Structure probing data (DMS and 2A3) for a 177-nucleotide construct. For DMS, 1,495 sequencing reads were counted. Conditions: 150 mM KOAc, 10 mM MgCl2 and 150 mM bicine (pH 8.5), 24 C. The 2A3 profile rests on 975 reads. The data come from the RNA Mapping Database (RMDB), library RFMREP.

RNA sequence: GGGAACGACUCGAGUAGAGUCGAAAAGGUGAUCAAUUGUUUAUAUGCAUCAACAUUCUUUGUGGAUUGUUUGACAGUAGACAGUCAUUUGUAUACGUUAACGAAUUUUGAAAAAUUGAAUCAUUAUAUGUUAUAAUACCUUCGGGUAUUAUAACAUAAAAGAAACAACAACAACAAC
Reactivity to DMS in 0.01 (KOAc 150mM, MgCl2 10mM, bicine 150mM(pH8.5), 24C), signal-to-noise 2, nucleotides 027 to 126: g000g010u000g010a030u000c030a040a040u000u010g000u000u000u000a040u010a050u020g000c130a170u000c030a060a020c010a020u000u000c030u000u000u010g030u000g000g010a020u000u010g000u000u010u000g020a100c050a080g030u000a030g000a020c010a110g000u000c110a080u010u000u000g010u000a090u000a050c180g000u010u010a080a050c070g010a030a050u000u000u000u000g000a040a060a050a050a030u000u010g010a070a090u000c000a030u000u000a090u000
Reactivity to 2A3 in 0.01 (KOAc 150mM, MgCl2 10mM, bicine 150mM(pH8.5), 24C), signal-to-noise 1, nucleotides 027 to 126: g000g010u000g000a030u000c000a000a020u070u000g020u080u170u030a110u030a020u070g050c000a050u000c000a020a010c000a020u030u040c040u080u300u270g100u210g060g020a040u070u010g080u050u070u090g000a020c030a030g000u000a000g050a010c000a000g060u030c000a000u000u000u060g040u000a150u000a020c040g020u090u090a070a000c010g020a040a130u060u240u190u230g080a140a110a040a020a000u040u000g000a030a000u020c000a020u010u270a120u080